[RMDB]
RNA sequence: GGGAACGACUCGAGUAGAGUCGAAAACAGAACUGGAUGGGCCGUGUGCUUAACCAGGACAAGAUCUCCUUCUCUCCAACGUUGUUGCCAACUCAUGAUUCUCCUAACCUGUGCUUGGAGGGACGUGCUACCAUAUAGGUGUUCGCACCUAUAUGAAUAGAGAUAGUACUUUCGAGUACUAUCUCUAAAAAGAAACAACAACAACAAC
Reactivity to 2A3 in 0.01 (KOAc 150mM, MgCl2 10mM, bicine 150mM(pH8.5), 24C), signal-to-noise 2, nucleotides 027 to 156: c080a010g050a050a030c000u040g000g020a050u030g120g030g000c070c110g250u210g130u300g090c020u020u080a090a090c010c000a000g040g040a030c050a000a210g040a130u060c050u020c080c000u080u060c040u000c010u000c010c040a060a120c110g000u000u020g030u000u010g050c000c030a080a040c020u010c060a030u110g080a170u210u000c030u080c020c010u040a080a080c040c050u210g020u110g150c140u040u010g000g020a030g000g000g010a000c000g040u050g010c010u040a090c010c060a010u000a000u000a000g010g000u000g020u040u010c240g010c130a010c000c000u000a000u000a000u000g000a010a040
Reactivity to DMS in 0.01 (KOAc 150mM, MgCl2 10mM, bicine 150mM(pH8.5), 24C), signal-to-noise 2, nucleotides 027 to 156: c080a150g000a100a130c000u000g020g020a140u000g020g000g000c000c010g040u000g040u000g040c040u020u000a060a130c040c020a040g060g020a170c060a040a080g010a110u000c020u010c010c050u010u000c000u000c010u000c020c010a060a210c170g000u000u000g000u000u000g000c010c080a080a190c040u000c030a070u000g010a110u010u000c010u010c010c030u010a030a050c040c060u020g030u000g000c050u010u020g040g010a040g020g020g010a060c080g020u000g000c030u000a140c120c010a020u000a020u000a000g010g010u010g010u000u010c270g040c000a020c000c010u000a010u000a010u000g020a100a160
The record gives the reactivity of an RNA of 207 nucleotides to 2A3 and DMS. The 2A3 profile rests on 817 reads. DMS adducts were read by reverse transcription with MarathonRT. The RNA was probed in 150 mM KOAc, 10 mM MgCl2 and 150 mM bicine (pH 8.5) at 24 C. It was measured as part of the RMDB library M2RFPK.